[RMDB]
RNA sequence: GGGAACGACUCGAGUAGAGUCGAAAAACAUAGUUUGGCCGACGUCAUACCAUUGAAGACGAAUCGUUAAAGACACCAGCUCGUCUUAUAGGAGCCCAAUUAGCAAAAACAGUCCUGUAGGAACCAAGCCAUAAAACUUGUUCGCAAGUUUUAUGGCAAAAGAAACAACAACAACAAC
Reactivity to 2A3 in 0.01 (KOAc 150mM, MgCl2 10mM, bicine 150mM(pH8.5), 24C), signal-to-noise 1, nucleotides 027 to 126: a000c000a040u050a030g070u040u030u060g060g000c050c030g030a060c020g000u020c010a030u090a150c080c060a140u070u120g080a150a080g010a010c000g010a020a090u100c030g030u020u080a040a140a000g030a020c000a010c070c010a020g000c070u030c050g070u030c030u040u090a030u030a050g000g030a020g000c010c010c010a080a110u170u100a060g060c030a000a000a000a000a200c000a020g100u070c000c030u100g000u030a060g000g050a040a000c050c010a090a000
Reactivity to DMS in 0.01 (KOAc 150mM, MgCl2 10mM, bicine 150mM(pH8.5), 24C), signal-to-noise 1, nucleotides 027 to 126: a110c060a060u010a030g010u000u000u000g010g010c020c010g030a110c050g050u000c040a050u020a130c040c080a040u000u010g010a130a050g000a080c030g020a030a050u010c080g000u000u000a030a080a100g010a110c060a110c040c070a030g000c110u000c010g000u000c030u000u000a080u000a060g000g000a040g020c030c030c070a060a020u000u000a040g000c020a020a010a070a050a070c090a060g050u000c030c030u000g110u000a020g020g030a030a100c130c010a030a070